[RMDB]
RNA sequence: GGGAACGACUCGAGUAGAGUCGAAAACCCUUUAUAGUAUUUUAAAUUCGAAACUUGUUGAUAAUUUGUUGUGUAACUUCAUUUAAAUGAAUUGAAACAAAUUUAAUACAAGUGGAUGUAGGAUAACCUUAACGCGGUUAUUCGUAACCGCGUUAAGAAAAGAAACAACAACAACAAC
Reactivity to DMS in 0.01 (KOAc 150mM, MgCl2 10mM, bicine 150mM(pH8.5), 24C), signal-to-noise 1, nucleotides 027 to 126: c000c000c000u050u080u030a110u070a200g030u020a040u030u040u010u000a000a110a100u020u000c030g030a190a150a060c000u000u000g020u000u000g000a300u020a000a010u000u020u000g000u000u010g020u020g000u000a050a060c130u010u000c000a000u020u070u000a060a040a020u000g000a010a040u000u000g000a230a000a000c000a000a040a030u020u020u000a010a180u020a000c000a000a010g020u000g010g000a110u000g020u040a050g010g000a070u010a050a090c190
Reactivity to 2A3 in 0.01 (KOAc 150mM, MgCl2 10mM, bicine 150mM(pH8.5), 24C), signal-to-noise 1, nucleotides 027 to 126: c000c000c030u000u220u290a240u000a020g030u000a190u000u050u000u030a170a210a080u010u050c010g000a020a020a020c000u000u000g000u000u080g000a000u070a260a020u000u000u000g000u010u010g070u010g040u200a030a000c050u000u000c000a020u160u260u240a130a300a000u000g000a000a000u020u060g210a060a000a000c000a000a000a080u000u000u040a030a010u030a000c000a000a000g000u000g010g010a130u260g100u300a100g000g000a030u070a160a090c000
An RNA of 177 nucleotides, treated with DMS and 2A3 and read out base by base. The data come from the RNA Mapping Database (RMDB), library RFM100. For DMS, 1,268 sequencing reads were counted. Conditions: 150 mM KOAc, 10 mM MgCl2 and 150 mM bicine (pH 8.5), 24 C.